Annotation
The data come from the RNA Mapping Database (RMDB), library TTRDEL. This 177-nucleotide RNA was probed chemically with 2A3 and DMS. For DMS the reverse transcriptase was MarathonRT. The RNA was probed in 150 mM KOAc, 10 mM MgCl2 and 150 mM bicine (pH 8.5) at 24 C.
RNA sequence: GGGAACGACUCGAGUAGAGUCGAAAAGAUAUGGAUGGGAGCUUUGAUCACACUGCCUCGGAAACGAGGUUGUGGGAGCUUAGUCCUAAGUCAAAGGUACCGUUGGACUUCGGUCCAACGGUACCAACUUCCUGUUUUUGUUCGCAAAAACAGGAAGAAAAGAAACAACAACAACAAC
Reactivity to 2A3 in 0.01 (KOAc 150mM, MgCl2 10mM, bicine 150mM(pH8.5), 24C), signal-to-noise 2, nucleotides 027 to 126: g020a020u070a040u100g000g010a020u040g200g300g070a020g000c020u060u150u210g280a190u300c040a000c020a000c100u040g020c010c000u010c000g000g020a040a040a010c010g010a000g040g000u010u020g000u010g010g060g010a000g000c000u000u010a000g010u000c000c000u010a090a030g010u010c010a070a100a140g000g000u010a000c000c010g000u030u020g000g000a030c040u050u090c300g030g000u000c000c010a020a000c000g000g000u000a000c000c000a000a000
Reactivity to DMS in 0.01 (KOAc 150mM, MgCl2 10mM, bicine 150mM(pH8.5), 24C), signal-to-noise 2, nucleotides 027 to 126: g000a040u000a120u010g000g020a030u000g000g020g000a030g010c000u000u000u000g020a120u010c160a080c000a010c040u000g010c000c000u000c010g010g000a070a020a080c000g020a010g000g010u000u000g010u000g010g010g000a000g010c000u010u000a300g000u000c000c000u000a030a150g000u010c020a070a110a120g000g020u000a000c000c010g020u000u030g000g000a010c000u010u010c200g040g020u000c000c000a020a000c000g000g010u000a000c000c000a020a030